[RMDB]
RNA sequence: GGGAACGACUCGAGUAGAGUCGAAAAGAUCUGUGCCGAUCCGAAACGCUAGCAAACAGCCCGCAUCAUGUCGUCUCCUAACUUCGACGUGGUGAAAUACUGAGCUUAUGCGAGUAAGCCUGUUAGCAAUAGAUCAGAACGUUCGCGUUCUGAUCAAACUGACAUUCGGUUUCGACCGAAUGUCAGUAAAAGAAACAACAACAACAAC
Reactivity to 2A3 in 0.01 (KOAc 150mM, MgCl2 10mM, bicine 150mM(pH8.5), 24C), signal-to-noise 1, nucleotides 027 to 156: g000a030u010c020u180g110u050g210c050c030g020a070u020c030c110g110a100a040a040c040g010c030u100a030g000c080a220a000a040c010a040g040c010c000c000g000c010a010u000c000a000u020g010u010c000g000u000c000u040c100c090u110a180a270c090u100u040c020g000a010c000g010u000g070g020u000g060a070a000a000u150a020c030u040g060a020g000c000u090u000a030u050g120c050g000a020g090u000a020a000g020c000c000u040g000u070u010a000g020c000a090a170u040a200g010a000u000c000a000g000a000a000c020g010u020u070c220g000c000g120u000u040c090u000g010a000u010c000a000a000

Overview: The data come from the RNA Mapping Database (RMDB), library M2RFPK. Structure probing data (2A3) for a 207-nucleotide construct. Conditions: 150 mM KOAc, 10 mM MgCl2 and 150 mM bicine (pH 8.5), 24 C.